Chemical mapping of a 177-nucleotide RNA with DMS and 2A3.
Reactivities are rounded to 0.1 and cut off at 0 and 3.
DMS adducts were read by reverse transcription with MarathonRT.
The reactions ran in a buffer of 150 mM KOAc, 10 mM MgCl2 and 150 mM bicine (pH 8.5), at 24 C.
The DMS profile rests on 1,508 reads.
The data come from the RNA Mapping Database (RMDB), library 15KREP.
[RMDB]
RNA sequence: GGGAACGACUCGAGUAGAGUCGAAAAGGCGACCGAAGCGAGGAGGAAAGCAAAGAAAGCAACGGGGCUAGCGAGUGGAUGUUCCGCCUCCCCGGAGUCCCGAGUGAGGCUUAUCCCGGGGAAUCCGCUCACGAAUAAUGUUCGCAUUAUUCGUGAGAAAAGAAACAACAACAACAAC
Reactivity to DMS in 0.01 (KOAc 150mM, MgCl2 10mM, bicine 150mM(pH8.5), 24C), signal-to-noise 2, nucleotides 027 to 126: g000g020c020g000a090c050c030g020a120a110g040c050g020a100g000g010a090g010g010a060a110a080g000c090a050a100a120g000a090a090a080g020c060a060a100c100g010g010g010g010c110u000a070g000c070g010a080g000u000g000g010a060u000g010u000u020c060c020g010c070c040u000c000c000c010c040g010g020a070g010u000c050c010c010g020a090g030u000g000a090g000g000c070u010u010a130u010c080c020c020g000g000g000g000a100a060u010c030c120g000
Reactivity to 2A3 in 0.01 (KOAc 150mM, MgCl2 10mM, bicine 150mM(pH8.5), 24C), signal-to-noise 1, nucleotides 027 to 126: g060g000c030g060a030c030c030g040a000a010g060c040g020a050g020g020a030g000g010a130a050a000g010c030a000a030a200g030a060a150a000g040c000a000a040c030g000g010g010g000c030u020a030g080c000g070a020g020u080g040g040a080u070g030u090u020c020c010g010c010c000u000c000c000c000c010g000g020a000g010u000c000c000c050g000a030g050u140g040a040g020g040c000u070u050a070u110c040c010c020g000g000g000g000a000a000u060c010c030g030